[RMDB]
RNA sequence: GGGAACGACUCGAGUAGAGUCGAAAAGUGGGCGGAUCACAAGGUCAAGAGAUUGAAACCAUCCUGGCUAACACAGUGAAACCCGUCUCUACUAAAAAUACAAAAACUUAGCUGGGCGUGGUGGUGGUAGUAGUGGAUGAUUCGUCAUCCACUACUAAAAAGAAACAACAACAACAAC
Reactivity to DMS in 0.01 (KOAc 150mM, MgCl2 10mM, bicine 150mM(pH8.5), 24C), signal-to-noise 5, nucleotides 027 to 126: g040u000g000g000g020c050g010g000a070u000c030a040c080a110a160g020g010u000c040a050a060g000a080g020a090u000u010g000a070a100a070c120c090a050u000c000c000u010g000g010c010u000a040a070c130a070c190a090g000u010g000a040a050a060c100c000c020g020u000c010u010c030u000a060c050u000a010a020a030a030a040u020a060c110a040a020a030a040a100c180u000u000a040g000c040u000g000g010g010c120g030u000g010g010u000g010g000u000g000g000
Reactivity to 2A3 in 0.01 (KOAc 150mM, MgCl2 10mM, bicine 150mM(pH8.5), 24C), signal-to-noise 3, nucleotides 027 to 126: g080u120g000g020g020c000g010g000a030u020c020a000c020a050a050g030g010u030c030a090a030g090a030g000a140u050u170g120a140a040a040c040c010a000u010c000c000u010g010g000c010u050a130a000c120a000c040a140g000u010g050a100a040a050c050c010c010g030u010c040u000c000u000a000c000u080a050a090a030a060a040u210a060c100a050a100a030a110a030c050u060u070a010g010c040u030g000g030g050c030g030u050g040g000u030g020g060u050g000g020